[RMDB]
RNA sequence: GGGAACGACUCGAGUAGAGUCGAAAACUCGCCGCUGGACGGAAGCGGUCCCGAGGGUUGGGGAGCCCGAUGACGGACCGCCGACGAGAGCCGGCUCGGGUCUAAGGGAGCCCGGGUCCUCGCUCCGCGCCUACAAAAAUUUCGAUUUUUGUAGGCGAAAAGAAACAACAACAACAAC
Reactivity to DMS in 0.01 (KOAc 150mM, MgCl2 10mM, bicine 150mM(pH8.5), 24C), signal-to-noise 4, nucleotides 027 to 126: c020u010c060g020c050c010g020c060u000g000g000a080c040g000g000a270a120g000c000g000g000u000c000c000c000g000a010g000g000g020u000u000g010g030g020g050a180g000c000c000c010g010a060u030g020a150c300g000g000a010c000c000g000c010c070g000a190c020g000a120g010a030g000c020c300g000g020c000u000c000g010g000g000u000c040u020a110a150g000g010g010a210g010c020c000c000g000g000g000u000c010c040u000c180g000c030u000c000c040g000
Reactivity to 2A3 in 0.01 (KOAc 150mM, MgCl2 10mM, bicine 150mM(pH8.5), 24C), signal-to-noise 9, nucleotides 027 to 126: c010u010c020g040c020c010g020c040u090g060g040a060c030g020g030a050a020g000c000g000g000u000c000c000c000g010a020g040g020g010u130u100g060g030g010g060a020g010c000c000c000g050a220u010g000a000c000g010g000a000c010c000g000c000c010g010a010c010g060a060g010a010g060c030c060g010g000c000u000c010g010g000g000u030c040u150a150a150g070g030g030a050g040c000c000c000g000g000g000u070c010c020u060c040g010c010u000c000c000g010
An RNA of 177 nucleotides, treated with DMS and 2A3 and read out base by base. Conditions: 150 mM KOAc, 10 mM MgCl2 and 150 mM bicine (pH 8.5), 24 C. The data come from the RNA Mapping Database (RMDB), libraries RFM100 and RFMREP. Values are in units of 0.01, from 0 to 300, in steps of 10.